Chemical mapping of a 177-nucleotide RNA with 2A3 and DMS.
The RNA was probed in 150 mM KOAc, 10 mM MgCl2 and 150 mM bicine (pH 8.5) at 24 C.
For DMS, 8,470 sequencing reads were counted.
The data come from the RNA Mapping Database (RMDB), library TTRDEL.

RNA sequence: GGGAACGACUCGAGUAGAGUCGAAAAGAUAUGGAGUGGUUCCUCUCAACAGCUCGGAAACGAGACAUGAGAAGAACGCACUCCUAAGUCAAAGCAGCAUUUGUGGCUUCGGCCACAAAUGCUGCAACAAUACCUGAAAGUUCGCUUUCAGGUAUUGAAAAGAAACAACAACAACAAC
Reactivity to 2A3 in 0.01 (KOAc 150mM, MgCl2 10mM, bicine 150mM(pH8.5), 24C), signal-to-noise 2, nucleotides 027 to 126: g020a000u080a040u190g000g000a000g010u010g030g010u010u020c030c000u020c000u000c000a060a220c050a120g060c010u010c020g030g040a090a070a060c020g030a030g050a080c040a130u090g000a010g000a010a020g000a010a000c030g020c300a000c000u010c000c000u020a080a000g030u010c040a070a080a140g010c020a000g020c040a020u030u030u040g040u030g000g020c030u150u150c300g090g000c030c000a000c010a030a000a000u000g010c000u010g020c000a000a000
Reactivity to DMS in 0.01 (KOAc 150mM, MgCl2 10mM, bicine 150mM(pH8.5), 24C), signal-to-noise 5, nucleotides 027 to 126: g000a040u000a300u000g010g000a010g030u000g010g010u000u000c000c030u000c000u010c000a020a070c270a200g010c000u000c000g000g000a110a070a190c010g010a020g000a030c080a200u000g000a010g010a010a020g000a010a000c010g010c010a010c000u010c000c000u000a010a060g000u000c040a100a120a120g000c010a020g010c000a010u000u000u010g030u010g000g000c000u010u010c220g030g000c000c000a000c000a000a000a010u000g010c010u000g000c010a010a040